[RMDB]
RNA sequence: GGGAACGACUCGAGUAGAGUCGAAAACCCUGGUUAUUCGUAACCAGGGGUUGAGUGAAUCCUCUCAGAGCAUCGGUGGAUCACACGAAACGCAUGGACGACAAUUACGGUUAUUCGUAACCGUAAAUUAGAGGUCAUGUUUCGACAUGACCUCUAAAAAAGAAACAACAACAACAAC
Reactivity to 2A3 in 0.01 (KOAc 150mM, MgCl2 10mM, bicine 150mM(pH8.5), 24C), signal-to-noise 1, nucleotides 027 to 126: c020c000c020u000g000g010u010u020a050u090u070c110g030u010a000a000c000c000a000g080g020g030g010u030u120g090a020g000u060g020a060a130u010c000c000u000c020u040c050a040g000a050g060c020a160u140c030g080g000u020g000g020a040u040c000a030c020a030c180g050a070a080a020c090g010c030a040u060g120g030a020c020g010a020c080a020a100u050u000a010c000g010g000u010u000a010u030u090c140g030u040a020a010c010c010g030u020a010a000a010
Reactivity to DMS in 0.01 (KOAc 150mM, MgCl2 10mM, bicine 150mM(pH8.5), 24C), signal-to-noise 2, nucleotides 027 to 126: c010c000c000u000g000g000u000u000a020u000u020c190g000u000a010a010c000c000a020g050g000g000g010u000u000g010a150g040u000g000a180a040u000c000c010u000c010u000c060a070g010a070g020c150a060u000c040g000g030u010g020g010a070u000c050a050c030a100c050g000a090a050a080c130g010c090a080u020g010g000a050c050g020a080c120a130a180u020u000a010c000g000g010u000u000a020u000u000c110g030u000a000a020c000c000g020u000a030a010a110
The record gives the reactivity of an RNA of 177 nucleotides to 2A3 and DMS. 2A3 adducts were read by reverse transcription with SuperScript II with manganese. The reactions ran in a buffer of 150 mM KOAc, 10 mM MgCl2 and 150 mM bicine (pH 8.5), at 24 C. For DMS the reverse transcriptase was MarathonRT.